[RMDB]
RNA sequence: GGGAACGACUCGAGUAGAGUCGAAAAGCGCGAAGCGGUGUAGCGUCACUUUAAUGGCGGUACUAUGAAUUGAUGCAAGGUGUGGAGCGACCUUAAACAGUUCUGGUGGUGCUCUGAAUGGAGUGCUUGAGGCCUCGCCGAUUCGUCGGCGAGGCAACGUGGAUACGGGAUUCGUCCCGUAUCCACGAAAAGAAACAACAACAACAAC
Reactivity to 2A3 in 0.01 (KOAc 150mM, MgCl2 10mM, bicine 150mM(pH8.5), 24C), signal-to-noise 1, nucleotides 027 to 156: g070c040g020c020g060a030a030g020c020g030g020u040g020u020a030g020c000g060u050c030a060c130u060u240u150a090a160u140g020g000c030g010g060u040a080c000u030a070u090g090a050a060u050u060g030a060u070g110c020a040a060g010g000u030g040u050g000g010a060g030c010g010a010c010c000u070u230a070a040a040c000a000g000u000u000c030u040g100g070u130g020g010u030g010c000u000c000u020g130a120a080u270g060g000a000g000u030g040c000u110u110g030a140g010g070c000c000u030c000g000c000c000g040a030u020u150c190g060u000c010g080g030c030g000a000g000g000c000a000a000